[RMDB]
RNA sequence: GGGAACGACUCGAGUAGAGUCGAAAACGAGAGCGAUUCGUCGCUCUCGAAAGAGUGCACGGCAGCACAAGAAUAGCCGAAGAAAAGCAGAGCCGACUGCAAAAACUCCCAUGUUCGCAUGGGAGAAGUAUUGUCUGUGAUUCGUCACAGACAAUACAAAAGAAACAACAACAACAAC
Reactivity to 2A3 in 0.01 (KOAc 150mM, MgCl2 10mM, bicine 150mM(pH8.5), 24C), signal-to-noise 3, nucleotides 027 to 126: c000g020a000g000a010g020c010g000a020u040u090c140g040u010c010g100c020u000c010u000c000g000a000a010a000g100a020g020u040g000c040a030c110g020g010c010a070g000c010a040c040a060a040g160a070a060u110a060g020c000c010g020a090a030g100a090a180a010a000g010c000a010g000a020g140c030c090g110a130c020u010g000c020a020a020a050a100a110c000u000c000c000c010a000u010g050u030u080c280g000c100a000u000g000g000g000a000g000a000a000
Reactivity to DMS in 0.01 (KOAc 150mM, MgCl2 10mM, bicine 150mM(pH8.5), 24C), signal-to-noise 2, nucleotides 027 to 126: c000g010a000g000a010g000c010g030a040u000u010c170g040u000c000g010c010u000c000u010c000g010a050a060a070g000a130g010u000g010c000a100c040g000g000c000a280g000c000a020c030a090a110g010a070a080u000a180g010c010c010g030a120a160g000a080a050a080a140g000c010a020g000a140g020c110c170g020a200c030u000g000c010a060a050a150a150a130c000u000c000c000c000a000u000g000u010u030c200g050c000a020u000g010g000g000a000g000a000a020